[RMDB]
An RNA of 207 nucleotides, treated with 2A3 and DMS and read out base by base. The RNA was probed in 150 mM KOAc, 10 mM MgCl2 and 150 mM bicine (pH 8.5) at 24 C. The 2A3 profile rests on 3,813 reads. DMS adducts were read by reverse transcription with MarathonRT.
RNA sequence: GGGAACGACUCGAGUAGAGUCGAAAAGCGAAAGUUGCCAUGAGUCCGUAACUUUCGUAGUCAUUGAUAAAGGGGCAGGUCUCGCUCUUUUGUCAUUGCGGUUGCCUAGAGGCAUGGUCGUUUACCGAAAAGAGCUCAUUCUUCGGAAUGAGCUCAAGUUACAGUGCUAGUUCGCUAGCACUGUAACAAAAGAAACAACAACAACAAC
Reactivity to 2A3 in 0.01 (KOAc 150mM, MgCl2 10mM, bicine 150mM(pH8.5), 24C), signal-to-noise 4, nucleotides 027 to 156: g010c000g000a030a000a000g010u000u000g000c030c040a100u130g100a020g080u060c060c010g020u010a000a000c000u010u000u000c010g000u010a020g030u030c010a020u010u010g000a000u020a010a010a010g010g020g020g010c030a030g030g280u090c100u090c160g000c000u000c040u020u000u000u020g000u000c010a020u000u040g040c050g090g010u070u060g030c000c030u100a120g030a130g060g030c060a060u080g010g010u000c000g000u030u040u070a300c050c010g020a030a060a020a040g010a000g010c000u010c000a000u000u010c000u010u010c100g110g000a000a000u000g010a000g010c000u000c000a000a000
Reactivity to DMS in 0.01 (KOAc 150mM, MgCl2 10mM, bicine 150mM(pH8.5), 24C), signal-to-noise 2, nucleotides 027 to 156: g030c020g000a020a030a010g020u010u020g030c000c060a210u000g040a150g000u000c040c130g020u010a010a030c000u000u000u000c010g070u000a050g010u000c060a140u000u000g010a040u000a020a030a050g030g010g000g000c040a160g050g000u000c160u000c090g000c010u000c000u000u000u010u010g000u000c040a050u010u010g010c070g000g040u000u010g010c000c050u010a160g000a230g020g020c050a100u010g010g000u010c030g010u010u000u010a100c010c020g020a090a060a120a270g010a020g010c010u000c000a000u000u000c000u000u020c300g090g000a010a020u000g010a000g020c010u000c000a010a020
About this RNA: The data come from the RNA Mapping Database (RMDB), library M2RFPK. The DMS profile rests on 3,279 reads.